[RMDB]
RNA sequence: GGGAACGACUCGAGUAGAGUCGAAAAGCUUGUAGCUUCGGCUACAAGCAUCUAAAAUGAGCGGUAAAUAAUUACGAGGCGUUACCGCUGAACGCCUCGAUACAACCACAUCAUUCGUGAUGUGGAACUCAACCACUAACUUCGGUUAGUGGUUGAGAAAAGAAACAACAACAACAAC
Reactivity to 2A3 in 0.01 (KOAc 150mM, MgCl2 10mM, bicine 150mM(pH8.5), 24C), signal-to-noise 2, nucleotides 027 to 126: g010c010u000u020g000u000a000g010c030u060u010c300g090g000c000u000a000c000a020a000g010c000a000u010c010u070a080a120a100a130u100g070a010g000c010g060g130u150a080a120a130u120a060a150u170u120a080c020g000a000g000g000c010g000u000u030a100c010c000g000c070u020g020a000a000c010g000c000c000u010c000g000a010u030a040c030a060a100c000c000a010c000a000u000c010a020u050u100c180g100u020g000a020u000g000u000g010g000a000a000
Reactivity to DMS in 0.01 (KOAc 150mM, MgCl2 10mM, bicine 150mM(pH8.5), 24C), signal-to-noise 1, nucleotides 027 to 126: g010c000u000u000g010u000a000g000c010u000u010c200g030g000c010u000a010c000a000a000g010c000a010u000c020u020a080a020a140a100u040g000a020g020c020g010g000u030a070a110a060u020a030a150u010u000a120c060g010a040g030g020c030g000u000u000a040c030c000g020c030u000g000a020a000c000g000c000c000u010c000g020a090u000a050c280a140a130c000c010a000c010a010u000c010a040u000u080c220g000u000g000a020u000g010u000g000g000a020a020